[RMDB]
RNA sequence: GGGAACGACUCGAGUAGAGUCGAAAACUCGCUUCGGCGAGGCAACAGCGUACUACCUAUGACAUGCUUACGUCCUUGAUUUGGCUCCCAAAUAGGAGCCAUAAGGAUUGGACCUAAGCAACAGCAUAGGUAUCGCAAAAAUCACUUUCGAGUGAAACUAAUUGACAGGUUUCGACCUGUCAAUUAGAAAAGAAACAACAACAACAAC
Reactivity to 2A3 in 0.01 (KOAc 150mM, MgCl2 10mM, bicine 150mM(pH8.5), 24C), signal-to-noise 4, nucleotides 027 to 156: c000u000c000g000c010u040u070c230g130g000c010g000a000g010g000c050a080a140c020a070g030c030g050u090a070c110u000a000c020c020u000a010u010g110a150c020a110u040g000c000u000u010a000c020g000u000c000c000u050u090g050a070u060u030u010g010g000c000u030c000c030c040a100a270a000u290a130g000g000a000g000c000c000a020u090a020a020g080g050a040u040u060g010g000a000c000c010u000a010a010g030c000a040a030c020a040g060c000a000u000a000g000g000u000a000u020c010g040c000a050a080a020a020a010u030c010a000c030u090u140u220c270g070a020g010u020g010a100a040a050
Reactivity to DMS in 0.01 (KOAc 150mM, MgCl2 10mM, bicine 150mM(pH8.5), 24C), signal-to-noise 2, nucleotides 027 to 156: c010u000c010g000c000u000u010c220g090g040c020g010a020g040g020c110a040a120c110a240g000c040g040u000a060c150u000a030c000c000u010a000u000g000a080c020a300u000g000c000u000u000a030c140g000u000c000c000u000u000g000a300u010u000u030g010g040c020u020c000c000c010a050a140a210u030a030g010g000a020g040c000c020a020u000a000a060g010g010a250u000u000g020g030a060c020c030u000a030a030g010c000a010a090c060a160g000c010a040u000a000g020g020u000a000u000c000g080c010a020a050a070a080a100u000c000a000c000u000u000u000c120g020a120g010u020g000a060a110a300